RNA sequence: GGGAACGACUCGAGUAGAGUCGAAAAGCGAGUCGUACGCGACUCGAAUGGUAUUGUCGGCGUAAAAGAACAAGACGUCACCGGACGCGACCGGGCUAAAAAGCGAAACGUCAUCUACGGAUGACGAAAAACGGACCUGGGUUCGCCCAGGUCCGAAGACGUUAACAAGGUUCGCCUUGUUAACGUCAAAAGAAACAACAACAACAAC
Reactivity to 2A3 in 0.01 (KOAc 150mM, MgCl2 10mM, bicine 150mM(pH8.5), 24C), signal-to-noise 1, nucleotides 027 to 156: g010c000g020a010g000u010c010g010u030a010c160g000c030g140a000c000u000c000g010a030a060u100g020g020u090a110u090u070g210u120c040g000g010c030g000u010a050a090a070a120g080a050a050c060a000a040g060a030c000g000u020c000a000c030c010g000g000a020c010g000c000g040a000c000c000g000g000g020c010u080a000a000a000a000a020g000c010g080a070a000a000c000g010u000c000a000u000c000u010a030c200g080g010a000u010g000a000c000g050a060a000a010a000a000c010g000g000a000c000c000u000g010g000g000u020u090c120g040c000c000c000a000g000g000u000c000c000g000a000a000